An RNA of 207 nucleotides, treated with DMS and 2A3 and read out base by base. It was measured as part of the RMDB library OK3TST. Conditions: 150 mM KOAc, 10 mM MgCl2 and 150 mM bicine (pH 8.5), 24 C.
RNA sequence: GGGAACGACUCGAGUAGAGUCGAAAACAUUAGGAUUGCUACCGUUUAUACCUGGGCAUAUGGUGAUACUGAUGAGUGUUGGGAUGAAGCUUGGUAUUUAGCUUCCUUUAGAGCAAAUUUAACACUCGCUGAGUUAAAAGCAAUUACACCCAUAUCGCCCUUUACCCCAAUUCGUUGGGGUAAAGGGAAAAGAAACAACAACAACAAC
Reactivity to DMS in 0.01 (KOAc 150mM, MgCl2 10mM, bicine 150mM(pH8.5), 24C), signal-to-noise 1, nucleotides 027 to 156: c050a120u010u000a100g010g010a030u000u000g030c020u000a100c010c060g010u000u000u000a100u000a050c080c060u000g000g000g030c020a060u000a070u000g000g030u000g000a130u000a100c060u000g060a060u000g000a050g000u010g020u000u010g030g010g020a170u000g010a030a040g000c020u000u020g010g050u000a060u000u000u010a060g010c000u000u000c030c100u000u000u030a110g030a110g030c030a080a060a090u000u010u000a110a060c010a000c010u000c020g040c090u000g040a070g000u000u000a080a100a070a120g030c020a040a070u010u000a060c040a030c030c000c010a050u000a070u000c150g000
Reactivity to 2A3 in 0.01 (KOAc 150mM, MgCl2 10mM, bicine 150mM(pH8.5), 24C), signal-to-noise 3, nucleotides 027 to 156: c040a070u120u210a060g040g060a010u010u110g030c040u100a070c040c020g050u040u100u080a090u060a050c010c010u030g060g010g000c050a030u090a030u120g050g040u110g000a080u040a170c050u030g170a250u050g000a050g000u010g000u050u070g050g040g020a080u040g010a020a010g010c040u020u040g070g010u170a160u080u190u100a030g000c010u020u010c020c000u050u110u190a080g010a000g000c030a040a040a100u050u150u070a040a000c010a000c020u010c030g010c040u060g030a040g050u070u110a020a130a000a030g000c010a000a000u000u060a070c020a000c040c000c020a000u040a040u140c020g020